[RMDB]
RNA sequence: GGGAACGACUCGAGUAGAGUCGAAAAGAUAUGGAUCUUUACGGGAGCAACAGCUCGGAAACGAGACAUGCUCAGUAACGGGAUCCUAAGUCAAACUCACUGACGAAGUUCGCUUCGUCAGUGAGAACUCAUUGAAUUGGUUCGCCAAUUCAAUGAGAAAAGAAACAACAACAACAAC
Reactivity to 2A3 in 0.01 (KOAc 150mM, MgCl2 10mM, bicine 150mM(pH8.5), 24C), signal-to-noise 5, nucleotides 027 to 126: g030a000u080a030u200g000g000a000u010c000u050u080u040a030c070g300g300g030a010g000c010a010a150c040a190g060c010u010c000g040g020a090a070a010c000g000a000g050a040c060a080u060g000c000u000c020a000g010u010a060a060c140g090g000g000a000u010c000c010u030a110a030g030u010c030a010a030a130c000u000c000a000c000u000g010a000c010g000a010a010g020u070u160c260g060c230u000u000c000g000u000c000a000g000u000g010a000g000a010a000
Reactivity to DMS in 0.01 (KOAc 150mM, MgCl2 10mM, bicine 150mM(pH8.5), 24C), signal-to-noise 6, nucleotides 027 to 126: g000a050u000a300u000g000g000a000u000c000u000u000u010a020c010g000g030g000a000g010c000a030a090c260a160g010c010u000c010g010g010a080a100a200c000g000a010g000a050c090a180u000g010c000u010c000a150g000u000a020a050c300g010g000g000a020u000c000c000u010a040a120g020u000c040a100a100a140c000u000c010a010c000u010g000a010c000g000a020a000g010u000u010c260g000c010u000u000c000g010u000c000a000g000u000g000a000g010a050a080